[RMDB]
RNA sequence: GGGAACGACUCGAGUAGAGUCGAAAAUGGAGAGGAGCUCAGUGCGGGUGCAUCGAACAAGGGCAACAGAGCCUAGAGGCAGGCAACAGAAGACAGCUUGCCAACCUUCCUCAGCAGUUAUGAGAAACGUCAUUAUAAGAUUCGUCUUAUAAUGACGAAAAGAAACAACAACAACAAC
Reactivity to DMS in 0.01 (KOAc 150mM, MgCl2 10mM, bicine 150mM(pH8.5), 24C), signal-to-noise 9, nucleotides 027 to 126: u010g010g010a110g010a090g000g000a110g010c040u000c040a090g030u010g020c080g010g010g010u000g020c050a040u010c090g010a070a080c130a100a100g010g000g010c040a080a100c150a090g010a110g010c020c010u000a070g010a130g010g010c040a030g000g000c020a070a120c140a120g010a080a090g010a100c160a100g000c020u000u000g000c020c010a070a080c090c050u000u000c020c010u000c050a080g010c090a060g010u000u010a060u010g000a100g010a090a070a160
Reactivity to 2A3 in 0.01 (KOAc 150mM, MgCl2 10mM, bicine 150mM(pH8.5), 24C), signal-to-noise 8, nucleotides 027 to 126: u110g030g010a060g010a030g060g010a030g020c020u020c080a040g040u030g060c030g020g080g020u050g030c020a070u060c060g040a050a020c040a080a080g010g010g010c020a070a030c050a100g100a020g040c000c010u070a050g020a090g060g000c010a000g000g010c010a090a020c020a130g150a130a010g060a050c030a020g010c010u000u020g010c000c000a010a010c000c020u050u040c010c010u030c010a030g010c040a020g030u140u210a150u190g060a070g100a080a070a010
This 177-nucleotide RNA was probed chemically with DMS and 2A3. For 2A3 the reverse transcriptase was SuperScript II with manganese. It was measured as part of the RMDB library OK2TST. For DMS, 12,710 sequencing reads were counted.